[RMDB]
Structure probing data (DMS and 2A3) for a 177-nucleotide construct. The RNA was probed in 150 mM KOAc, 10 mM MgCl2 and 150 mM bicine (pH 8.5) at 24 C. 2A3 adducts were read by reverse transcription with SuperScript II with manganese. Source: RMDB library RFMREP, as collected in RNAgym.

RNA sequence: GGGAACGACUCGAGUAGAGUCGAAAAUAGCAAUACCAUAUCGUGAUCUCUAAUGAGCGUCCUCAUACUGUCCAAGGUGUUCAACCAUUUUACAAUGAAUAUUUAUGGCCUUGGUCGGUAACUGCGCCGGAUGGAAAAGGUUCGCCUUUUCCAUCCGAAAAGAAACAACAACAACAAC
Reactivity to DMS in 0.01 (KOAc 150mM, MgCl2 10mM, bicine 150mM(pH8.5), 24C), signal-to-noise 1, nucleotides 027 to 126: u020a060g020c040a160a080u000a150c070c100a040u000a090u010c110g010u000g000a040u030c030u010c010u040a040a040u020g000a010g020c010g000u010c020c040u010c030a220u010a040c040u010g000u000c000c010a000a010g020g050u010g000u000u010c100a100a110c170c040a020u000u000u010u020a160c130a080a050u000g000a020a120u000a170u010u000u000a040u000g010g010c010c000u000u000g000g010u000c010g010g010u000a030a110c120u010g030c090g010c140
Reactivity to 2A3 in 0.01 (KOAc 150mM, MgCl2 10mM, bicine 150mM(pH8.5), 24C), signal-to-noise 1, nucleotides 027 to 126: u090a000g050c070a050a100u080a220c000c080a050u040a040u110c030g060u040g060a060u070c000u000c000u060a040a080u150g010a000g000c000g030u000c020c000u060c010a020u060a070c000u060g030u000c000c000a020a010g000g020u040g070u060u080c000a000a030c060c000a010u010u070u040u030a150c080a080a050u100g000a050a000u080a080u120u180u070a060u160g050g050c010c010u000u000g000g000u010c010g000g000u010a030a020c030u150g020c050g080c100